[RMDB]
RNA sequence: GGGAACGACUCGAGUAGAGUCGAAAACGCAGAGGGUUCUGAUAACAAAGAACCUAGAUAGCCGCAUCGGUAUUAUAGGAUGUAGUCGGUUAGCCGGAAUGCCUGCAUCGUAAGCCUAUAAGUAAAUUUAAGUGUAAUCACUUCGGUGAUUACACAAGUGUUAUAGUUCCUUCGGGAACUAUAACACAAAAGAAACAACAACAACAAC
Reactivity to 2A3 in 0.01 (KOAc 150mM, MgCl2 10mM, bicine 150mM(pH8.5), 24C), signal-to-noise 4, nucleotides 027 to 156: c100g020c030a030g040a060g110g010g000u010u000c020u020g060a080u080a170a050c050a030a130a010g000a000a000c000c010u010a030g020a080u040a010g060c040c050g060c080a090u070c050g040g000u080a080u210u080a070u130a040g050g020a020u020g020u040a020g050u030c020g010g030u080u080a030g030c040c000g030g040a120a040u130g050c000c010u010g000c010a010u030c040g050u040a040a010g010c000c010u110a100u040a160a030g080u100a040a070a180u130u290u110a160a040g000u000g000u000a010a010u000c000a000c000u010u020c080g060g000u000g000a000u000u000a000c000a000c000a000a000
Reactivity to DMS in 0.01 (KOAc 150mM, MgCl2 10mM, bicine 150mM(pH8.5), 24C), signal-to-noise 2, nucleotides 027 to 156: c050g040c030a160g030a200g040g030g020u000u000c010u010g000a230u000a170a140c300a110a180a050g010a030a000c000c010u000a030g020a170u010a150g020c000c020g010c090a130u000c070g020g020u010a070u010u000a060u000a060g010g000a120u020g020u000a060g020u000c030g050g010u010u010a160g030c040c010g040g030a130a090u000g020c030c030u000g010c000a020u000c040g020u000a080a140g010c040c030u030a020u000a020a060g020u020a020a130a180u010u000u000a080a230g000u010g000u010a020a010u000c000a000c010u030u000c290g070g030u010g010a000u000u000a000c020a010c000a030a080